Structure probing data (DMS and 2A3) for a 177-nucleotide construct. The data come from the RNA Mapping Database (RMDB), library OK2TRN. The 2A3 profile rests on 1,841 reads. For DMS the reverse transcriptase was MarathonRT. 2A3 adducts were read by reverse transcription with SuperScript II with manganese. The reactions ran in a buffer of 150 mM KOAc, 10 mM MgCl2 and 150 mM bicine (pH 8.5), at 24 C.
[RMDB]
RNA sequence: GGGAACGACUCGAGUAGAGUCGAAAAGGCGUGCCUAAUACAUGCAAGUAGAACGCUGAAGGAGGAGCUUGCUCUUUCCGGAUGAGUUGCGAACGGGUGAGUAACGCGUAGGUAACCUGCCUGGUAGGCGUCUGACCUAAUUCGUUAGGUCAGACGCAAAAGAAACAACAACAACAAC
Reactivity to DMS in 0.01 (KOAc 150mM, MgCl2 10mM, bicine 150mM(pH8.5), 24C), signal-to-noise 2, nucleotides 027 to 126: g010g040c020g040u000g030c030c040u000a090a100u000a090c070a060u010g000c040a040a080g000u000a060g000a060a030c030g030c000u010g010a300a160g000g000a020g000g000a050g010c000u000u000g020c030u010c010u000u010u000c010c000g000g010a110u010g010a010g000u000u000g000c030g000a130a160c080g000g000g020u000g000a090g000u010a050a060c140g010c130g040u020a040g020g000u000a190a110c070c040u000g020c020c010u000g000g010u010a080g010
Reactivity to 2A3 in 0.01 (KOAc 150mM, MgCl2 10mM, bicine 150mM(pH8.5), 24C), signal-to-noise 2, nucleotides 027 to 126: g040g000c010g040u070g000c000c020u080a090a020u080a080c040a020u040g300c040a010a020g020u000a020g020a030a010c020g020c090u020g020a020a010g020g010a000g010g000a000g000c040u060u070g050c000u030c000u090u250u000c010c000g000g000a000u050g030a000g020u040u090g260c020g000a020a010c000g040g000g000u040g020a090g010u080a060a100c050g000c070g200u050a010g030g000u010a030a070c010c020u040g010c010c000u070g070g110u130a050g150